[RMDB]
RNA sequence: GGGAACGACUCGAGUAGAGUCGAAAAAACAAACAUCAAAUCGCAUAGCAAAGAGUCAAAAAAAUAGAGAGCUUUGCGAGACCUGCCAAGGGUGAAGAGAUACCAUCCAAGGAGCUGAAGAGAAAUCGAGAGCUCACGGCGUUCGCGCCGUGAGCAACCUUAUGUAGUCCUUCGGGACUACAUAAGGAAAAGAAACAACAACAACAAC
Reactivity to 2A3 in 0.01 (KOAc 150mM, MgCl2 10mM, bicine 150mM(pH8.5), 24C), signal-to-noise 1, nucleotides 027 to 156: a000a000c140a040a040a010c120a130u110c120a160a060a050u010c000g000c010a010u040a040g010c010a010a090a100g030a080g070u110c120a130a030a150a140a150a120a030u300a110g050a010g000a000g000c000u000u000u000g000c000g000a000g030a030c000c030u050g080c040c000a040a060g010g000g000u040g050a080a000g050a000g000a080u060a110c000c020a030u050c000c030a050a010g010g000a060g030c080u080g020a080a030g000a000g050a070a090a020u040c050g040a040g010a000g220c020u000c000a000c000g010g000c000g020u040u040c140g050c000g000c000c000g000u000g000a030g020c000a000a000